[RMDB]
RNA sequence: GGGAACGACUCGAGUAGAGUCGAAAAGCUACUGUGUCAACGAUCCGUUAUCAGUGCAGGAAAAUGCCUGUUAGCGUAAAAGCAAAACACAAAUCUAUCCAUGCAAGCAUUCACCGCCGGUUUACUGUCUUUUGUAAAGAUUCGUCUUUACAAAAGAAAAAGAAACAACAACAACAAC
Reactivity to 2A3 in 0.01 (KOAc 150mM, MgCl2 10mM, bicine 150mM(pH8.5), 24C), signal-to-noise 9, nucleotides 027 to 126: g040c030u050a030c040u070g010u020g030u090c040a070a030c060g050a060u030c020c010g020u010u020a020u030c010a000g020u030g240c010a010g040g070a160a140a060a040u070g010c000c000u010g010u020u030a010g000c000g050u100a050a060a050a020g040c040a040a060a080a020c040a010c000a020a100a050u040c030u080a090u020c030c010a010u060g020c030a030a050g020c010a040u030u060c040a060c070c030g020c010c010g030g010u020u030u030a050c020u020g020
Reactivity to DMS in 0.01 (KOAc 150mM, MgCl2 10mM, bicine 150mM(pH8.5), 24C), signal-to-noise 7, nucleotides 027 to 126: g010c050u000a070c070u010g020u000g010u010c040a140a090c070g000a140u000c130c010g010u000u010a020u000c020a030g000u030g020c020a030g010g010a080a060a100a120u010g010c010c030u000g000u000u000a060g010c010g010u010a040a060a090a150g010c070a050a050a070a030c060a030c060a050a080a080u010c060u000a050u010c030c030a070u010g010c060a060a060g000c030a060u010u010c050a060c030c030g010c040c060g010g000u000u000u000a040c050u000g000